[RMDB]
This 177-nucleotide RNA was probed chemically with 2A3 and DMS. It was measured as part of the RMDB library OK2TST. Conditions: 150 mM KOAc, 10 mM MgCl2 and 150 mM bicine (pH 8.5), 24 C.
RNA sequence: GGGAACGACUCGAGUAGAGUCGAAAAGAAGCGUAAGAAGCUACCACAUCAACUUGCUUCUCUUUUUUAUACUGUGCCGCGAUAUCUUGCAGCGCAUUGGUCAAAGAGGCAGCUGCAAAAACUGUAAACCCAGUUAACUGUUCGCAGUUAACUGGGUAAAAGAAACAACAACAACAAC
Reactivity to 2A3 in 0.01 (KOAc 150mM, MgCl2 10mM, bicine 150mM(pH8.5), 24C), signal-to-noise 1, nucleotides 027 to 126: g030a050a020g000c060g060u140a060a040g070a070a050g150c010u010a060c000c000a060c020a080u100c040a010a060c040u000u110g010c020u040u090c020u020c040u050u050u140u030u100u080a150u100a130c020u050g020u120g060c010c010g000c010g000a030u030a020u180c120u080u050g000c020a020g000c010g040c000a020u050u010g080g000u030c060a130a060a030g040a020g070g000c090a060g010c010u060g020c020a030a000a070a070a050c120u190g050u160a300a010
Reactivity to DMS in 0.01 (KOAc 150mM, MgCl2 10mM, bicine 150mM(pH8.5), 24C), signal-to-noise 2, nucleotides 027 to 126: g010a100a040g010c220g000u030a020a080g010a090a160g010c050u010a200c020c040a110c150a060u000c060a020a160c080u010u000g000c010u010u000c020u000c010u000u000u000u000u000u000a080u020a050c120u000g000u000g010c030c040g020c040g000a090u020a040u020c110u000u000g020c000a060g010c010g020c010a030u000u010g010g010u010c170a030a090a160g010a060g000g030c050a020g000c000u000g020c100a000a030a130a090a110c120u020g000u010a070a110